[RMDB]
RNA sequence: GGGAACGACUCGAGUAGAGUCGAAAAACCACCUUGCGCUGCACCAGGACGUGACAAUCGGGCUGCCGAAUAUGAGUGAGUUGAGACGCGACAUGGUGGAGAAUGCUCUGUCUGACGUUGAAUGGUGCGUCGUACAAGGAUUCGUCCUUGUACGACGAAAAGAAACAACAACAACAAC
Reactivity to DMS in 0.01 (KOAc 150mM, MgCl2 10mM, bicine 150mM(pH8.5), 24C), signal-to-noise 3, nucleotides 027 to 126: a080c020c020a080c050c020u010u010g020c050g000c040u000g000c020a040c020c020a060g020g000a050c020g010u000g000a050c060a100a110u010c090g010g010g010c090u010g010c020c020g010a060a070u010a080u010g020a160g010u000g010a090g020u000u000g000a170g010a080c060g020c030g010a110c040a030u010g010g030u000g000g000a130g030a030a100u010g000c000u000c030u000g030u000c030u000g020a060c040g010u000u000g000a080a130u000g010g010u000g000
Reactivity to 2A3 in 0.01 (KOAc 150mM, MgCl2 10mM, bicine 150mM(pH8.5), 24C), signal-to-noise 2, nucleotides 027 to 126: a020c020c010a020c020c030u010u110g040c070g000c030u070g030c020a020c040c000a020g010g070a030c020g020u000g000a020c030a020a090u070c060g000g040g020c070u100g110c010c010g060a080a020u150a110u190g090a070g080u080g050a050g020u040u070g100a070g030a060c030g050c010g060a140c060a080u080g000g090u060g040g030a010g080a090a030u110g020c030u030c010u000g020u000c020u100g050a020c010g020u020u040g070a120a140u090g020g000u000g010